This 177-nucleotide RNA was probed chemically with DMS and 2A3. Values cover nucleotides 27 to 126.

[RMDB]
RNA sequence: GGGAACGACUCGAGUAGAGUCGAAAAGAUAUGGACCCAGGUGGGUUCGCAACAGCUUGCUCGGAAACGAGCAAGACAUGCGAUCCACUGGGUCCUAAGUCAAAACCUUAAUGUUCGCAUUAAGGAACUGUGUAAUAGAGUUCGCUCUAUUACACAGAAAAGAAACAACAACAACAAC
Reactivity to DMS in 0.01 (KOAc 150mM, MgCl2 10mM, bicine 150mM(pH8.5), 24C), signal-to-noise 7, nucleotides 027 to 126: g000a060u010a300u000g000g000a010c000c000c000a020g010g030u010g010g030g000u010u010c010g020c000a040a070c300a180g000c010u000u000g010c000u000c000g000g000a130a120a230c000g010a010g000c000a010a000g000a020c110a150u000g000c000g010a010u000c000c000a050c000u000g000g000g010u000c000c010u000a010a070g010u010c030a130a080a080a150c000c010u000u000a000a000u000g020u000u010c230g020c010a020u000u000a010a010g010g000a070a140
Reactivity to 2A3 in 0.01 (KOAc 150mM, MgCl2 10mM, bicine 150mM(pH8.5), 24C), signal-to-noise 8, nucleotides 027 to 126: g020a010u080a050u160g010g000a000c000c010c030a060g290g300u140g050g040g050u200u290c030g000c010a060a270c030a090g080c010u000u000g000c000u000c000g010g030a080a140a110c010g000a000g000c000a000a000g000a010c000a030u060g000c010g000a010u000c000c000a000c000u000g010g010g000u000c000c000u000a020a000g010u010c010a010a040a110a200c000c000u010u010a000a010u030g060u070u100c300g000c170a010u000u010a010a010g020g020a090a150
High 2A3 reactivity points to a flexible backbone, as in loops and unpaired stretches.